RNA sequence: GGGAACGACUCGAGUAGAGUCGAAAAGGCCCACGCAUCAAGAUCGCCGCACUGUGCGUAGGUAAGGAGGACAUAACGUGACUGAACAAAGUAGGCAGGUUUGGGUGGCAUCGAAGUGUGUCCUGGGGGUAUAGAGCGUGUUCGCACGCUCUAUACCAAAAGAAACAACAACAACAAC
Reactivity to DMS in 0.01 (KOAc 150mM, MgCl2 10mM, bicine 150mM(pH8.5), 24C), signal-to-noise 3, nucleotides 027 to 126: g000g010c050c000c010a170c040g000c030a040u010c050a110a130g000a050u010c060g020c050c040g060c060a110c040u010g000u000g010c020g010u000a040g010g000u000a060a140g020g010a110g000g010a090c060a090u020a060a070c090g010u000g030a110c040u010g020a070a250c060a050a050a070g030u000a070g000g020c020a070g000g010u000u000u000g010g000g020u000g000g000c050a040u000c070g010a090a090g010u000g050u000g000u000c000c010u000g000g010g010
Reactivity to 2A3 in 0.01 (KOAc 150mM, MgCl2 10mM, bicine 150mM(pH8.5), 24C), signal-to-noise 2, nucleotides 027 to 126: g130g030c010c020c020a000c010g090c010a060u100c050a090a020g030a120u080c060g050c030c020g080c000a020c040u040g000u080g070c030g030u060a020g040g030u020a040a060g050g080a010g010g040a050c040a100u110a060a040c070g070u050g080a050c030u060g020a100a020c000a030a120a040g040u070a060g080g030c050a020g060g000u000u080u090g080g040g010u030g020g020c000a020u020c030g020a070a010g050u040g000u010g010u070c000c000u050g030g000g050